The record gives the reactivity of an RNA of 177 nucleotides to 2A3 and DMS. For DMS the reverse transcriptase was MarathonRT. The DMS profile rests on 9,630 reads. Conditions: 150 mM KOAc, 10 mM MgCl2 and 150 mM bicine (pH 8.5), 24 C. The 2A3 profile rests on 4,541 reads.
RNA sequence: GGGAACGACUCGAGUAGAGUCGAAAAUGGUGAUGAUGAAGCGAUGUUCUACGACGAAGACUAUGUUACUGCACUGGAGCAUGGCUUGCCGCCGACCGCGGGUCUGGGUAUCGGUAUCGACCGUAUGACUAAAUUUGAUCUUCGGAUCAAAUUUAGUAAAAGAAACAACAACAACAAC
Reactivity to 2A3 in 0.01 (KOAc 150mM, MgCl2 10mM, bicine 150mM(pH8.5), 24C), signal-to-noise 4, nucleotides 027 to 126: u140g030g000u050g030a110u020g000a030u110g090a060a010g020c050g050a020u010g030u020u030c040u050a050c080g190a030c050g080a130a020g050a060c070u070a090u300g090u120u130a090c030u070g050c070a040c080u040g020g000a010g000c010a020u020g060g020c000u010u030g050c000c000g000c020c020g020a040c000c030g030c070g080g020g010u060c040u090g000g000g050u040a060u170c020g000g050u070a070u140c010g090a080c010c010g030u120a100u160g050
Reactivity to DMS in 0.01 (KOAc 150mM, MgCl2 10mM, bicine 150mM(pH8.5), 24C), signal-to-noise 6, nucleotides 027 to 126: u020g010g020u000g010a140u000g000a120u000g000a070a040g020c020g000a060u000g010u000u000c020u000a060c110g020a120c140g000a080a070g000a100c080u000a090u010g010u000u010a060c050u000g030c100a100c160u010g010g010a050g000c020a030u000g000g020c020u000u000g010c050c030g000c040c040g000a080c100c070g010c080g000g010g010u000c040u010g000g000g010u000a060u000c030g010g010u000a070u010c110g010a100c020c030g020u010a090u000g010